[RMDB]
RNA sequence: GGGAACGACUCGAGUAGAGUCGAAAAGAUAUGGAGGCAUUGUAGACAUGACGUGGGAUCGGAAACGAUCCCUUCGUCAACAGCUACACGAUGCCUCCUAAGUCAAAGGAGUGCUUCGGCACUCCAACUGUAAACAUGAGUUCGCUCAUGUUUACAGAAAAGAAACAACAACAACAAC
Reactivity to 2A3 in 0.01 (KOAc 150mM, MgCl2 10mM, bicine 150mM(pH8.5), 24C), signal-to-noise 5, nucleotides 027 to 126: g020a000u030a020u100g010g000a000g010g000c010a000u000u070g010u040a040g040a120c230a300u300g010a000c040g000u010g010g000g000a010u000c010g010g010a020a020a020c010g000a000u000c010c010c000u040u040c000g000u000c000a010a020c060a020g070c020u040a000c020a010c100g040a010u020g000c000c000u000c000c000u000a000a000g010u000c020a010a070a130g020g000a010g000u010g000c000u100u170c300g180g000c000a000c000u000c000c000a000a000
Reactivity to DMS in 0.01 (KOAc 150mM, MgCl2 10mM, bicine 150mM(pH8.5), 24C), signal-to-noise 7, nucleotides 027 to 126: g000a030u000a230u010g000g010a020g020g000c000a020u000u000g020u000a030g010a080c130a250u010g010a010c000g010u000g000g010g010a010u000c010g010g010a050a050a080c000g000a010u000c000c000c000u000u010c010g020u000c000a080a090c300a120g010c050u000a050c050a100c300g010a020u000g010c000c000u000c000c000u010a010a080g000u000c050a070a130a140g000g010a010g020u000g000c000u000u020c240g030g000c000a010c000u000c000c000a010a020